[RMDB]
RNA sequence: GGGAACGACUCGAGUAGAGUCGAAAAGAUAUGGAAAUGGGAGGGUGAUGACCAUGGUCACAGUGAAACAUAUUCGGAAACGAAUAUGUUUCAUCACAGCCAUGCAAGCCUUAACAUUUCCUAAGUCCUGAUGAAUAACGUUCGCGUUAUUCAUCAGAAAAGAAACAACAACAACAAC
Reactivity to 2A3 in 0.01 (KOAc 150mM, MgCl2 10mM, bicine 150mM(pH8.5), 24C), signal-to-noise 3, nucleotides 027 to 126: g020a030u090a040u160g020g010a010a000a020u010g000g030g020a060g030g040g040u050g070a300u190g040a030c080c020a000u000g000g000u130c040a070c100a190g070u050g070a000a000a000c000a000u010a020u010u000c000g030g040a090a070a060c020g000a000a000u000a000u000g000u000u010u000c000a000u000c000a000c020a000g000c010c010a000u000g000c030a060a170g030c010c000u030u020a010a010c010a000u000u000u000c000c000u000a050a020g050u010c010
Reactivity to DMS in 0.01 (KOAc 150mM, MgCl2 10mM, bicine 150mM(pH8.5), 24C), signal-to-noise 6, nucleotides 027 to 126: g000a110u010a190u010g020g010a000a020a020u000g020g010g020a070g000g000g010u010g010a090u010g010a180c300c000a010u000g000g020u020c030a140c300a300g000u000g000a010a030a010c000a000u000a020u000u010c000g020g000a090a100a150c010g020a020a020u000a000u000g000u000u000u000c000a010u000c090a150c300a300g000c000c000a000u000g000c040a080a230g000c000c000u000u010a120a090c010a010u000u000u010c000c000u010a030a100g010u000c050